[RMDB]
RNA sequence: GGGAACGACUCGAGUAGAGUCGAAAAAUAACAGCGGGGUUUACUCUAACAGCCGCAUGCUGUUUGGCCUUUCUGUGCAGGGUAAUGCGCCGAAGUUUUUGACUCGCGUCAGCCGUCGCGGUGUGCCCAGCACUUAAGGGUUCGCCCUUAAGUGCUGAAAAGAAACAACAACAACAAC
Reactivity to DMS in 0.01 (KOAc 150mM, MgCl2 10mM, bicine 150mM(pH8.5), 24C), signal-to-noise 3, nucleotides 027 to 126: a060u010a030a080c070a040g020c010g030g000g010g020u000u010u000a070c110u000c120u000a100a060c070a040g000c020c200g030c220a070u010g020c010u000g000u000u000u000g030g020c020c010u000u000u000c090u000g000u000g010c040a100g010g000g000u010a040a030u010g010c030g010c030c010g010a110a100g010u000u000u000u000u000g000a040c010u000c090g010c170g000u000c060a060g020c050c030g000u000c060g030c030g000g000u010g010u000g000c020c040
Reactivity to 2A3 in 0.01 (KOAc 150mM, MgCl2 10mM, bicine 150mM(pH8.5), 24C), signal-to-noise 2, nucleotides 027 to 126: a010u080a010a000c010a010g020c020g000g050g010g040u050u080u100a080c090u070c060u130a040a030c020a030g030c030c080g240c120a050u220g030c020u010g010u060u090u080g050g020c000c000u040u150u080c080u110g070u080g020c030a020g010g000g080u070a060a040u080g020c050g050c030c000g060a080a040g030u000u010u040u080u150g050a010c010u000c100g020c020g060u050c010a020g070c040c100g050u070c010g010c020g040g050u060g000u020g030c000c000

Chemical mapping of a 177-nucleotide RNA with DMS and 2A3. Reactivities are rounded to 0.1 and cut off at 0 and 3. For 2A3 the reverse transcriptase was SuperScript II with manganese. The DMS profile rests on 4,124 reads. The 2A3 profile rests on 2,103 reads.